[RMDB]
RNA sequence: GGGAACGACUCGAGUAGAGUCGAAAAAUCUAGGUACAUUUUCCCUUUGUUCUGGAAAAUGACAAAUGGGACAUUCUCAAUUGUAUGAGUGCUCUGAAAGCAUUUCUUGUAAGCAUGAGGGCCAAUAAUUUAAUCCGUACUUCGGUACGGAUUAAAUAAAAGAAACAACAACAACAAC
Reactivity to DMS in 0.01 (KOAc 150mM, MgCl2 10mM, bicine 150mM(pH8.5), 24C), signal-to-noise 2, nucleotides 027 to 126: a110u000c020u010a030g010g000u020a110c080a020u010u010u000u000c000c010c080u020u010u000g000u000u010c090u000g000g000a100a030a060a040u000g000a040c010a010a050a050u010g010g020g000a070c250a070u000u010c020u010c020a060a130u000u000g010u000a040u000g020a080g000u010g000c010u000c070u010g010a100a150a120g010c020a050u000u000u010c040u020u000g000u000a030a100g010c070a050u010g010a050g000g000g000c060c040a060a110u010a060